[RMDB]
Structure probing data (2A3) for a 177-nucleotide construct. For 2A3 the reverse transcriptase was SuperScript II with manganese.
RNA sequence: GGGAACGACUCGAGUAGAGUCGAAAAGAUGACUUCCAGGACUGUUAUGGAACACUAUGCGAGUUAACAUAACGUUGACUCAAGGCAAGUGAAGCAUGGUGUUCCACUUGCCUUUGUCAAUGGAAGAGAUAGUUGACGUGUUCGCACGUUAGCUAUCAAAAGAAACAACAACAACAAC
Reactivity to 2A3 in 0.01 (KOAc 150mM, MgCl2 10mM, bicine 150mM(pH8.5), 24C), signal-to-noise 2, nucleotides 027 to 126: g170a070u200g040a010c000u020u010c000c020a000g020g070a040c030u080g050u140u070a070u060g000g010a020a010c000a020c060u090a070u240g100c090g210a070g050u000u020a060a060c020a000u130a130a050c130g000u020u040g010a000c010u060c160a000a020g040g000c030a030a050g040u060g100a070a010g000c030a060u290g210g000u220g090u120u000c000c010a000c000u020u040g000c000c000u080u100u070g000u000c010a010a020u010g000g010a010a000g020a000

Source: RMDB library OK1LIB, as collected in RNAgym. Conditions: 150 mM KOAc, 10 mM MgCl2 and 150 mM bicine (pH 8.5), 24 C.